[RMDB]
RNA sequence: GGGAACGACUCGAGUAGAGUCGAAAAGUCCGCAACAUCCAGCCCUUGCUGAGCGUGAUCGUGGUCGCCGGCGGAUCCAGCCAGGACAGCGUGUUCGGCUAUGAGGACCUACUCAACGAGGCCGGGGCACAGCGGAACGUUUCGACGUUCCGCUGUGAAAAGAAACAACAACAACAAC
Reactivity to DMS in 0.01 (KOAc 150mM, MgCl2 10mM, bicine 150mM(pH8.5), 24C), signal-to-noise 2, nucleotides 027 to 126: g000u000c000c000g020c070a080a110c140a080u030c050c040a180g000c070c040c050u000u010g030c030u000g000a110g010c300g000u000g000a040u040c060g030u000g010g000u000c080g020c140c030g000g030c020g010g000a140u000c040c090a070g020c070c050a150g000g030a030c020a290g000c140g000u010g000u010u010c000g010g000c030u000a070u000g000a160g000g000a090c080c060u010a110c070u010c020a040a110c100g000a090g020g000c000c030g000g070g000g000
Reactivity to 2A3 in 0.01 (KOAc 150mM, MgCl2 10mM, bicine 150mM(pH8.5), 24C), signal-to-noise 2, nucleotides 027 to 126: g080u020c010c000g010c070a070a040c040a080u050c030c020a030g030c030c000c030u040u050g000c030u000g040a030g070c060g070u110g050a060u080c050g120u090g010g050u010c010g060c070c000g010g000c000g010g000a010u000c040c030a010g080c000c040a020g000g010a060c000a030g130c060g120u060g020u100u070c000g000g000c000u020a050u130g110a020g140g030a000c010c000u030a060c030u010c020a090a000c010g060a010g080g000c050c020g000g000g040g000
The record gives the reactivity of an RNA of 177 nucleotides to DMS and 2A3. The data come from the RNA Mapping Database (RMDB), library OK1LIB. DMS adducts were read by reverse transcription with MarathonRT. The 2A3 profile rests on 1,447 reads. For 2A3 the reverse transcriptase was SuperScript II with manganese. The DMS profile rests on 2,647 reads. The reactions ran in a buffer of 150 mM KOAc, 10 mM MgCl2 and 150 mM bicine (pH 8.5), at 24 C.